[RMDB]
RNA sequence: GGGAACGACUCGAGUAGAGUCGAAAACUGGAUCAGUAUAAGGAGAGCAUUAUCGAUGCGUUGGAGAGCAAUGAGCACGCUCAGGCAAGCAGGCUGCCUGGGAGGUUACAGGAUCUGCUGGCACUUACGAGUGCCAUGGUUUCGACCAUGGCACUCGAAAAGAAACAACAACAACAAC
Reactivity to 2A3 in 0.01 (KOAc 150mM, MgCl2 10mM, bicine 150mM(pH8.5), 24C), signal-to-noise 1, nucleotides 027 to 126: c010u010g020g000a060u120c010a040g100u150a040u020a160a150g050g030a030g000a000g060c040a110u030u080a060u250c100g010a040u090g000c030g110u040u050g010g050a070g000a010g040c010a020a080u130g010a040g000c000a000c100g010c000u000c010a010g000g020c010a010a080g020c000a010g060g040c030u030g020c030c010u040g010g020g000a060g000g090u070u080a060c030a050g010g000a030u020c000u020g010c020u080g020g000c020a000c100u050u100a030
Reactivity to DMS in 0.01 (KOAc 150mM, MgCl2 10mM, bicine 150mM(pH8.5), 24C), signal-to-noise 2, nucleotides 027 to 126: c050u000g010g010a050u010c090a080g020u000a050u010a120a080g020g000a130g010a100g000c030a040u000u000a040u000c140g000a100u000g000c070g000u010u000g000g010a100g000a060g000c080a090a090u010g000a060g020c070a080c100g030c020u000c040a020g000g020c000a030a100g010c060a080g020g010c140u010g010c030c030u000g010g000g000a040g000g000u000u010a090c080a040g000g000a050u000c030u000g010c030u000g010g010c050a120c040u000u000a120